[RMDB]
The record gives the reactivity of an RNA of 177 nucleotides to 2A3. The 2A3 profile rests on 583 reads. The RNA was probed in 150 mM KOAc, 10 mM MgCl2 and 150 mM bicine (pH 8.5) at 24 C. Reactivities are given for positions 27 through 126.
RNA sequence: GGGAACGACUCGAGUAGAGUCGAAAAUAAUACUAAUAUUUCUUUAUCAGCUCCUAAUUUGCAUGAGGAACUGGGCGUUCUCAGCGAUAAAGGUAACAGUAAAGAAGAAUUGGCUUUGUUACCACCAAGUAGUCAUAGGCUUCGGCCUAUGACUACUAAAAGAAACAACAACAACAAC
Reactivity to 2A3 in 0.01 (KOAc 150mM, MgCl2 10mM, bicine 150mM(pH8.5), 24C), signal-to-noise 2, nucleotides 027 to 126: u060a060a000u060a040c080u060a090a230u040a180u090u050u070c020u040u100u000a110u090c040a000g040c040u050c000c000u020a060a140u000u060u260g000c020a040u100g010a040g050g020a020a020c060u160g200g290g000c200g080u010u000c000u000c010a020g000c010g040a060u090a120a240a050g030g030u010a040a030c030a080g060u080a080a040a110g020a010a000g040a060a070u040u010g040g000c000u160u040u000g020u040u060a000c000c000a000c050c020a080